[RMDB]
RNA sequence: GGGAACGACUCGAGUAGAGUCGAAAAACAGGACUCUGCAUAAGCCGCGAGGCGACGUAUAGGGUCUGACGCCUGCCCGGUGCCGGAAGGUCACGCGGAGGUGUUAGCGCGAGCGAAGCACCGAAGCAGUCUCCACGGAAUUCGUUCCGUGGAGACUAAAAGAAACAACAACAACAAC
Reactivity to DMS in 0.01 (KOAc 150mM, MgCl2 10mM, bicine 150mM(pH8.5), 24C), signal-to-noise 4, nucleotides 027 to 126: a010c100a210g010g030a000c020u000c010u010g000c080a040u000a150a290g020c000c010g010c290g010a190g010g020c010g010a030c240g030u020a070u000a060g000g000g000u020c000u000g000a140c190g010c020c000u010g000c030c000c000g010g060u000g020c000c070g000g040a100a060g000g030u040c080a070c030g000c020g000g000a300g000g000u000g000u000u000a300g000c000g000c270g000a210g000c000g000a100a180g000c000a040c000c000g000a300a160g010c050
Reactivity to 2A3 in 0.01 (KOAc 150mM, MgCl2 10mM, bicine 150mM(pH8.5), 24C), signal-to-noise 4, nucleotides 027 to 126: a000c050a010g050g010a010c000u000c000u040g000c020a040u020a220a020g000c000c000g030c030g020a060g020g010c000g020a030c130g060u070a050u140a090g010g010g010u000c000u000g040a020c050g020c010c010u040g020c010c000c030g070g040u050g030c030c000g020g060a070a090g050g030u140c010a010c090g010c010g010g010a040g010g000u020g090u160u010a020g000c020g000c040g060a050g030c000g000a010a000g000c000a000c000c000g010a010a000g000c000
Background:
An RNA of 177 nucleotides, treated with DMS and 2A3 and read out base by base. For 2A3 the reverse transcriptase was SuperScript II with manganese. The reactions ran in a buffer of 150 mM KOAc, 10 mM MgCl2 and 150 mM bicine (pH 8.5), at 24 C. DMS (dimethyl sulfate) methylates the pairing face of unpaired adenines and cytosines. For DMS the reverse transcriptase was MarathonRT.